[RMDB]
RNA sequence: GGGAACGACUCGAGUAGAGUCGAAAACACUGGGGUUGCAUAACGGAACACCAUUACUAUCAUAAAUAAUUAUGUUGUCCAUAUCAGUUAAAUGAAGGGCGUUCAGGCAUUCGUUCCGGAAUGACUCAUACACAACAGCCUUCGGGCUGUUGUGUAUAAAAGAAACAACAACAACAAC
Reactivity to DMS in 0.01 (KOAc 150mM, MgCl2 10mM, bicine 150mM(pH8.5), 24C), signal-to-noise 1, nucleotides 027 to 126: c060a230c260u000g010g010g020g030u000u060g000c110a030u020a020a150c170g000g010a070a000c000a070c030c010a020u020u020a180c100u020a050u070c040a180u030a000a020a020u110a020a020u050u010a000u060g000u000u020g000u000c000c020a020u000a050u000c050a020g140u000u000a090a080a010u070g000a030a070g010g020g020c000g010u050u020c080a020g000g040c050a090u020u010c060g010u000u000c030c060g000g000a110a000u010g000a020c040u000c150
Reactivity to 2A3 in 0.01 (KOAc 150mM, MgCl2 10mM, bicine 150mM(pH8.5), 24C), signal-to-noise 2, nucleotides 027 to 126: c110a000c030u210g010g000g030g010u070u250g070c000a030u050a020a060c050g100g000a010a010c070a000c090c000a060u110u210a020c030u100a090u270c120a040u020a230a030a100u100a140a040u170u000a100u060g090u020u030g000u070c050c010a030u050a060u100c050a070g000u110u180a070a100a110u180g020a080a000g020g000g000c000g030u090u050c060a070g000g010c000a060u050u040c120g000u000u020c000c000g000g050a070a000u020g000a000c000u000c060